[RMDB]
RNA sequence: GGGAACGACUCGAGUAGAGUCGAAAACUUUAGAAUUUUAGAUCUUUCCCAGCCGAUUUUAGAAUUUUAGAUUUUCGACUUUCGGCUCGGGAGUGUUAAUAAUUGGCUGGGAGAGAAGCGUUUUUUCGAAGACGCAAAAGAAACAACAACAACAAC
Reactivity to 2A3 in 0.01 (KOAc 150mM, MgCl2 10mM, bicine 150mM(pH8.5), 24C), signal-to-noise 4, nucleotides 027 to 135: c030u300u300u290a200g120a190a160u150u130u070u160a120g000a050u010c000u000u000u000c000c000c000a000g000c000c020g050a040u000u120u000u170a190g160a300a260u140u140u100u100a110g030a180u040u040u000u020c020g020a010c000u090u140u050c110g110g020c080u020c010g000g000g000a000g000u000g000u000u020a230a230u120a050a020u050u010g000g000c000u000g030g020g000a000g000a000g000a000a000g010c000g010u000u000u000u000u020u020c120g070a030a010g000a000c000g000c000a040